[RMDB]
RNA sequence: GGGAACGACUCGAGUAGAGUCGAAAAAUUGUUUGUGCGUAGUAAGGAAGAAGACGGAUUUGCCUUCUACCCUGCUUGCACUAAUGGUCAUGCUGUACCGACUCUCUUUAGACUUAAGGGAGGUGCACAUGUAAAAGCUGUUCGCAGCUUUUACAUGAAAAGAAACAACAACAACAAC
Reactivity to DMS in 0.01 (KOAc 150mM, MgCl2 10mM, bicine 150mM(pH8.5), 24C), signal-to-noise 6, nucleotides 027 to 126: a040u000u000g020u000u000u000g000u000g000c000g010u010a010g010u000a010a030g000g010a230a010g010a020a000g010a010c010g020g010a230u010u010u010g010c000c000u000u000c000u000a040c030c000c010u000g010c000u000u000g010c000a010c000u000a020a040u000g010g000u000c110a120u000g010c060u000g010u010a190c030c020g000a180c050u000c010u000c010u000u000u000a100g010a150c250u010u000a010a010g000g010g000a040g010g020u000g010c070a140
Reactivity to 2A3 in 0.01 (KOAc 150mM, MgCl2 10mM, bicine 150mM(pH8.5), 24C), signal-to-noise 4, nucleotides 027 to 126: a000u080u070g010u020u000u020g000u000g000c020g030u030a000g010u020a060a020g020g010a010a000g000a000a000g020a030c040g080g080a240u100u090u300g020c010c000u010u020c000u000a020c000c000c000u000g000c000u020u010g010c000a000c000u010a000a020u030g040g020u050c060a050u070g040c030u030g020u050a020c020c020g100a080c020u010c000u000c000u030u050u060a190g090a290c040u070u070a030a000g010g010g010a010g020g000u030g020c030a030